An RNA of 207 nucleotides, treated with 2A3 and read out base by base. Reactivities are given for positions 27 through 156. Conditions: 150 mM KOAc, 10 mM MgCl2 and 150 mM bicine (pH 8.5), 24 C. For 2A3, 607 sequencing reads were counted. It was measured as part of the RMDB library M2RFPK.
[RMDB]
RNA sequence: GGGAACGACUCGAGUAGAGUCGAAAACCUGUUAUCUGACCAAUAACAGAAUGCACCAAAGCGUAAAAUCAUCUGAUUGGGUGAGUUGGUCGCACCGCCAUUUGACGAACGAACGCCAAGCCUAAGCACUACGAGUAUGUGUUCGCACAUACUCGAAACAUGGGGUCGGAUUCGUCCGACCCCAUGUAAAAGAAACAACAACAACAAC
Reactivity to 2A3 in 0.01 (KOAc 150mM, MgCl2 10mM, bicine 150mM(pH8.5), 24C), signal-to-noise 1, nucleotides 027 to 156: c000c000u000g000u000u000a000u010c020u000g010a000c000c000a010a000u000a000a000c000a010g050a150a140u130g040c080a020c030c060a130a000a020g010c030g050u110a000a050a020a070u050c100a060u010c020u060g010a150u100u080g080g000g000u050g000a050g010u030u060g010g000u010c020g000c000a010c000c010g070c030c060a110u080u120u130g010a020c020g010a140a090c050g000a070a000c030g010c000c010a110a000g000c000c010u060a060a030g070c070a060c140u160a060c130g000a000g040u000a020u000g030u000g020u000u030c110g020c020a000c000a000u000a010c020u000c000g000a000a010